Record summary:
Chemical mapping of a 177-nucleotide RNA with DMS and 2A3. It was measured as part of the RMDB library RFM100. The DMS profile rests on 2,988 reads. For DMS the reverse transcriptase was MarathonRT. The 2A3 profile rests on 1,876 reads. Conditions: 150 mM KOAc, 10 mM MgCl2 and 150 mM bicine (pH 8.5), 24 C.
RNA sequence: GGGAACGACUCGAGUAGAGUCGAAAAGAGACAACCCAGACCGGGGUUAAGGCCCCUAAGUGCCGGCUAAGUGUAAACGAUAAAGGAGGUCCCGGGUCGAAGACAGCGGGGAGGUAGGCUUAGAAGCGUGACAUAGCAGAUUCGUCUGCUAUGUCACAAAAGAAACAACAACAACAAC
Reactivity to DMS in 0.01 (KOAc 150mM, MgCl2 10mM, bicine 150mM(pH8.5), 24C), signal-to-noise 2, nucleotides 027 to 126: g020a190g000a080c160a050a110c040c000c010a110g010a080c140c100g000g050g000g000u010u040a060a180g010g030c030c000c000c020u000a040a090g010u000g000c050c020g000g010c060u010a110a110g030u000g000u020a000a050a090c080g000a070u000a050a080a100g000g000a120g000g020u030c070c010c030g020g000g000u010c000g030a050a100g010a060c040a100g020c080g000g000g010g000a030g020g000u010a010g000g030c050u020u000a070g020a070a040g030c190
Reactivity to 2A3 in 0.01 (KOAc 150mM, MgCl2 10mM, bicine 150mM(pH8.5), 24C), signal-to-noise 3, nucleotides 027 to 126: g080a010g000a020c010a030a090c010c000c000a000g040a030c010c040g040g000g010g000u090u090a030a060g170g020c020c000c000c010u000a060a070g010u080g060c000c000g060g010c000u020a000a100g040u090g060u170a090a070a060c040g070a090u200a070a140a040g040g020a030g000g040u040c030c000c020g030g000g010u040c030g020a100a000g040a010c020a020g040c050g000g000g000g050a010g000g030u040a000g080g000c000u020u080a050g030a140a000g100c040